The record gives the reactivity of an RNA of 177 nucleotides to DMS and 2A3. Values cover nucleotides 27 to 126. Source: RMDB library OK2TST, as collected in RNAgym. The 2A3 profile rests on 2,908 reads. The RNA was probed in 150 mM KOAc, 10 mM MgCl2 and 150 mM bicine (pH 8.5) at 24 C. DMS adducts were read by reverse transcription with MarathonRT.

RNA sequence: GGGAACGACUCGAGUAGAGUCGAAAAGCCAGCUCCACGGUGUUGCGCGGUGGCGGCACGUCUGCGAUCAGUUGGUUGGCGGCCUCGAUCCGGAACUUGGGCUUGCAGGUCCGCGCCGGUGCGCCGCCACCGAGCGCAUUUUCGAAUGCGCUCGGUGAAAAGAAACAACAACAACAAC
Reactivity to DMS in 0.01 (KOAc 150mM, MgCl2 10mM, bicine 150mM(pH8.5), 24C), signal-to-noise 6, nucleotides 027 to 126: g010c020c010a070g000c040u000c040c050a070c070g000g010u010g010u000u000g010c050g030c050g010g010u010g010g010c030g000g020c030a030c050g020u010c020u000g010c070g000a090u010c060a090g010u010u010g000g020u000u000g000g010c010g000g010c010c060u010c150g010a090u000c070c010g010g000a060a070c120u010u010g010g010g000c060u000u010g030c210a080g010g000u000c020c010g010c300g010c030c020g010g010u000g010c120g010c010c000g010c020
Reactivity to 2A3 in 0.01 (KOAc 150mM, MgCl2 10mM, bicine 150mM(pH8.5), 24C), signal-to-noise 2, nucleotides 027 to 126: g020c010c000a020g020c030u010c040c030a030c080g030g020u070g020u120u170g060c120g000c050g050g050u050g090g030c010g030g000c020a000c020g060u000c040u100g010c020g070a070u080c040a030g080u100u100g090g000u050u050g030g020c000g000g010c030c010u070c070g040a050u040c010c000g040g000a050a080c100u110u190g030g020g030c040u060u230g050c070a050g020g030u020c010c010g000c020g000c020c000g000g010u030g010c030g020c010c020g000c010